[RMDB]
RNA sequence: GGGAACGACUCGAGUAGAGUCGAAAAGAUAUGGAUCCCAGUAGGGAGAAGCAGAUCGGAAACGAUCUGGCUUCGACGAUCUACGGAUCCUAAGUCAAAUCAAUGGAAGCUUCGGCUUCCAUUGAAAGUAUCAAUCAGGCUUCGGCCUGAUUGAUACAAAAGAAACAACAACAACAAC
Reactivity to DMS in 0.01 (KOAc 150mM, MgCl2 10mM, bicine 150mM(pH8.5), 24C), signal-to-noise 1, nucleotides 027 to 126: g000a000u000a020u010g000g010a000u000c010c020c300a170g030u000a010g000g000g000a000g000a020a000g000c020a000g010a000u000c000g010g010a000a010a040c000g060a010u000c000u000g000g000c000u000u000c020g000a090c300g000a000u030c010u020a070c110g000g000a010u000c020c000u000a000a060g000u000c000a120a150a190u030c010a000a000u000g000g030a020a020g020c000u000u030c300g040g010c000u000u000c000c000a000u000u000g000a010a050a220

Description
Structure probing data (DMS) for a 177-nucleotide construct. Source: RMDB library TTRDES, as collected in RNAgym. Conditions: 150 mM KOAc, 10 mM MgCl2 and 150 mM bicine (pH 8.5), 24 C.